[RMDB]
Description:
Chemical mapping of a 177-nucleotide RNA with DMS and 2A3. The RNA was probed in 150 mM KOAc, 10 mM MgCl2 and 150 mM bicine (pH 8.5) at 24 C. Source: RMDB libraries RFM100 and RFMREP, as collected in RNAgym. DMS adducts were read by reverse transcription with MarathonRT. Values cover nucleotides 27 to 126.
RNA sequence: GGGAACGACUCGAGUAGAGUCGAAAAUGGGGCGGUACGCGCUUGAAAAGAUAUCGAGCGCGCCCUAAGCCUAUCUCAGCCGAGUCAGAGACUCGGCGAAGAGUGCAAGAGCAUAAGAUAGGCUGACAGUCUAAUUAAAAUUCGUUUUAAUUAGACUAAAAGAAACAACAACAACAAC
Reactivity to DMS in 0.01 (KOAc 150mM, MgCl2 10mM, bicine 150mM(pH8.5), 24C), signal-to-noise 9, nucleotides 027 to 126: u020g000g010g010g020c160g020g020u030a110c200g010c010g010c000u000u000g000a020a090a140a190g010a190u040a090u000c000g010a000g000c000g010c020g020c030c000c000u010a050a020g010c000c000u000a000u000c000u000c120a170g010c000c000g000a010g010u000c020a250g020a240g000a050c000u000c000g010g000c000g000a030a050g000a240g010u000g000c020a190a140g010a160g010c000a010u000a070a080g000a010u000a000g000g010c000u000g000a080c180
Reactivity to 2A3 in 0.01 (KOAc 150mM, MgCl2 10mM, bicine 150mM(pH8.5), 24C), signal-to-noise 9, nucleotides 027 to 126: u110g000g000g010g000c080g060g040u170a070c090g010c000g000c000u000u010g030a040a080a050a040g240a100u220a060u160c010g000a000g000c000g000c000g010c010c000c000u020a060a000g000c000c000u000a000u000c010u030c050a000g000c000c000g000a000g000u010c070a060g070a010g000a300c000u000c000g000g000c000g000a010a000g030a020g010u010g000c020a230a150g030a060g190c000a010u010a080a010g000a000u000a000g000g000c010u010g010a010c020